An RNA of 177 nucleotides, treated with DMS and 2A3 and read out base by base.
Reactivities are given for positions 27 through 126.
The data come from the RNA Mapping Database (RMDB), library M2PK90.
RNA sequence: GGGAACGACUCGAGUAGAGUCGAAAAUUUUGGGCAGAUAACAACUGUUACGCGUCAUGCCACUGUAUUGUAAACACUACAACAAAUUUUAAGUUUAAUACACCUACGCGACAAGAUGAAUCGGAAACUAGCCGUAGUUAUUCGUAACUACGGCUAGAAAAGAAACAACAACAACAAC
Reactivity to DMS in 0.01 (KOAc 150mM, MgCl2 10mM, bicine 150mM(pH8.5), 24C), signal-to-noise 2, nucleotides 027 to 126: u000u000u010u000g000g030g020c020a010g010a100u000a070a040c130a150a090c080u000g010u010u000a050c080g000c060g000u000c070a080u000g000c010c090a070c140u020g020u000a010u010u000g000u000a050a060a050c040a040c110u000a040c080a040a150c190a050a100a210u010u010u000u010a040a120g020u000u000u000a050a010u000a070c030a050c060c040u000a020c050g000c050g010a120c040a030a080g020a070u000g010a050a130u000c060g000g010a080a060a080
Reactivity to 2A3 in 0.01 (KOAc 150mM, MgCl2 10mM, bicine 150mM(pH8.5), 24C), signal-to-noise 2, nucleotides 027 to 126: u050u110u040u140g040g030g000c020a020g020a060u090a080a080c020a090a090c020u120g000u080u080a100c050g010c000g000u040c060a040u100g050c000c030a020c030u030g000u030a010u100u050g050u040a010a020a000c020a000c140u230a020c020a170a010c050a020a260a100u070u160u070u150a160a040g010u030u020u040a000a010u020a010c020a000c000c000u030a020c030g000c000g060a030c000a020a000g050a100u100g020a050a060u110c040g010g030a060a060a050